[RMDB]
Chemical mapping of a 207-nucleotide RNA with DMS and 2A3. For DMS the reverse transcriptase was MarathonRT. The RNA was probed in 150 mM KOAc, 10 mM MgCl2 and 150 mM bicine (pH 8.5) at 24 C. High DMS reactivity at an A or C suggests that its Watson-Crick edge is free. For 2A3 the reverse transcriptase was SuperScript II with manganese.

RNA sequence: GGGAACGACUCGAGUAGAGUCGAAAAUUUGAUGGCAGAAGGGCAUAACUGUAAAUCUCAGUUUUUAUAUGGUAUUGUAUAAUAUAGUGGCAUCCUUUGCGGCCAGUUGAUUGUGAAGAGCAGUUUGCCUUUACUUAGCUUCCAUGAACAUUAGCUAACUAUACCCUAGGUUCGCCUAGGGUAUAGUAAAAGAAACAACAACAACAAC
Reactivity to DMS in 0.01 (KOAc 150mM, MgCl2 10mM, bicine 150mM(pH8.5), 24C), signal-to-noise 2, nucleotides 027 to 156: u000u000u000g000a130u000g020g030c050a080g020a060a080g020g020g040c040a020u010a010a030c020u000g010u000a030a140a260u000c010u010c020a030g000u000u000u000u030u000a060u010a060u010g010g010u000a060u000u000g010u000a080u000a050a070u000a110u010a060g020u000g030g000c040a100u000c080c070u000u010u000g020c110g040g040c000c010a060g010u000u010g010a070u000u000g000u020g020a030a050g000a300g020c020a070g020u000u000u010g000c010c000u000u020u000a080c060u010u000a090g010c010u000u000c050c020a080u000g010a080a060c050a130u000u010a110g010c040u000a070
Reactivity to 2A3 in 0.01 (KOAc 150mM, MgCl2 10mM, bicine 150mM(pH8.5), 24C), signal-to-noise 1, nucleotides 027 to 156: u050u020u120g060a080u050g010g000c020a020g000a050a000g000g000g040c000a010u140a030a000c020u000g030u010a060a000a140u040c000u000c010a010g000u070u040u000u120u020a090u020a130u050g000g010u020a030u080u300g070u070a160u180a150a090u150a010u100a180g050u080g040g010c000a070u200c000c000u080u210u060g070c020g010g000c000c000a000g160u090u080g110a090u000u020g000u030g020a030a080g000a010g000c000a000g000u010u020u040g000c000c000u000u000u140a170c050u020u030a040g010c020u070u020c010c010a100u100g010a100a020c030a170u130u180a030g040c080u120a000